[RMDB]
RNA sequence: GGGAACGACUCGAGUAGAGUCGAAAAAAAUGCCACAACUGCAACUCGUUGCACCUUUGGGCCAAGUCUACGGAGGACCUGUUAACCCACAUUUACCAGGCGAUUUGGCGACCUGGGAGACAAAAACCAUUUACAUUCGAAAACCAUAAAAGAUACACCUACUAGUGCGAUUCGUCGCACUAGUAGGAAAAGAAACAACAACAACAAC
Reactivity to 2A3 in 0.01 (KOAc 150mM, MgCl2 10mM, bicine 150mM(pH8.5), 24C), signal-to-noise 2, nucleotides 027 to 156: a020a020a000u090g000c030c010a120c100a140a050c080u060g040c000a100a040c010u020c120g030u090u090g070c100a100c010c040u100u040u080g070g000g020c010c000a080a020g010u000c010u050a010c030g050g000a010g010g060a040c000c010u010g030u100u040a010a010c010c030c020a110c010a030u080u100u160a040c000c000a010g000g020c010g080a060u060u000u110g080g000c010g020a070c000c010u000g000g130g030a040g010a000c120a030a140a010a080a040c010c010a010u030u090u150a120c040a040u210u150c000g030a000a060a240a080c040c040a100u220a110a040a040a000g060a020u300a020c030a000